[RMDB]
RNA sequence: GGGAACGACUCGAGUAGAGUCGAAAAUUUGCCGCCGUUGACAAUCGGCGCGAGGAACAAGCCUGCCGUCAAAAAGCCGGUUGCAAUCCAAAAGAUGGCGGAUUGGAUGUGCCAAGUACGGGUCAGGGCAUAUCGUACUCUUCGGAGUACGAUAUGCAAAAGAAACAACAACAACAAC
Reactivity to 2A3 in 0.01 (KOAc 150mM, MgCl2 10mM, bicine 150mM(pH8.5), 24C), signal-to-noise 3, nucleotides 027 to 126: u020u020u100g050c020c000g020c000c020g030u050u130g050a080c060a050a050u040c000g000g000c010g000c020g020a070g070g010a090a110c050a070a020g090c000c000u030g030c030c000g010u000c030a100a000a000a110a000g050c050c020g040g000u030u080g000c020a020a030u010c090c020a010a020a090a090g190a110u250g080g060c060g030g000a010u000u030g040g020a050u090g040u070g050c000c020a080a020g020u100a040c000g010g000g140u120c040a020g020g070
Reactivity to DMS in 0.01 (KOAc 150mM, MgCl2 10mM, bicine 150mM(pH8.5), 24C), signal-to-noise 3, nucleotides 027 to 126: u000u000u020g010c070c020g060c000c010g030u000u040g020a120c160a090a070u020c030g010g020c030g010c070g010a120g000g000a140a050c180a130a120g000c010c010u010g020c010c000g000u000c070a050a150a100a130a170g000c030c040g010g000u000u010g000c150a070a030u030c020c090a080a080a080a140g040a090u000g000g010c150g000g020a030u000u030g000g000a060u030g000u000g030c000c000a100a060g010u040a060c070g000g000g010u070c030a070g010g000